RNA sequence: GGGAACGACUCGAGUAGAGUCGAAAAUGGCUGCAUUCGCUGCAUUCGCAUCCGACCUGGACGAUGCCACGCGAUCCCAACUGGAACACGGUCAACGGGUUACCGAGUUGAUGAAGCAGAAGCAGUAUACUAUCGGAGUAUUCGUACUCCGAUAGUAAAAAGAAACAACAACAACAAC
Reactivity to 2A3 in 0.01 (KOAc 150mM, MgCl2 10mM, bicine 150mM(pH8.5), 24C), signal-to-noise 5, nucleotides 027 to 126: u080g060g020c010u010g000c010a100u080u000c020g000c030u030g000c010a040u120u120c030g010c070a090u000c020c070g230a300c070c080u110g010g000a010c010g010a020u020g020c050c030a060c080g000c010g000a050u030c010c000c000a000a020c010u040g000g040a040a010c030a010c070g070g010u100c060a110a090c080g060g000g000u060u060a210c020c030g060a050g020u020u020g050a110u040g040a040a020g020c040a020g020a080a010g010c010a000g050u070a060
Reactivity to DMS in 0.01 (KOAc 150mM, MgCl2 10mM, bicine 150mM(pH8.5), 24C), signal-to-noise 9, nucleotides 027 to 126: u010g010g020c010u000g000c030a110u000u000c050g020c020u000g010c020a050u000u000c060g030c080a090u000c010c030g000a100c120c070u020g010g000a100c130g000a050u000g000c030c090a120c190g000c030g010a080u000c030c020c010a130a070c060u000g010g010a050a050c050a070c030g020g010u010c120a070a130c120g010g000g010u000u000a060c050c020g010a080g010u000u000g000a070u010g000a080a060g010c020a090g010a090a090g020c030a020g010u000a230